RNA sequence: GGGAACGACUCGAGUAGAGUCGAAAAAGAAUCCUCACGAGAAUCUUUACCUGACUUGGCGAGUGCCCUAUCAAAAAGGGUUGCUAAGGGCAGUGGCCUACGACAUUUCUGGUAAAAGCAUUCCAAAAACCAGUGGACGUUCUCAGGUUAGAACCUAGUCAUAGGCAUCAUUCGUGAUGCCUAUGACAAAAGAAACAACAACAACAAC
Reactivity to 2A3 in 0.01 (KOAc 150mM, MgCl2 10mM, bicine 150mM(pH8.5), 24C), signal-to-noise 1, nucleotides 027 to 156: a000g040a010a050u030c000c010u060c040a100c070g230a220g020a160a020u020c020u010u000u010a020c000c000u000g000a000c010u010u000g000g000c000g030a010g060u020g010c030c000c000u120a110u150c190a060a070a050a110a010g020g000g000u100u170g030c030u080a120a140g030g030g010c030a140g080u130g170g030c000c000u070a060c010g000a000c010a020u000u000u090c010u030g000g000u020a030a030a020a000g030c040a010u010u120c060c030a000a010a030a060a130c040c050a060g030u060g030g050a030c000g010u000u000c020u000c020a000g070g060u030u090a050g040a080a040c030c030u010a030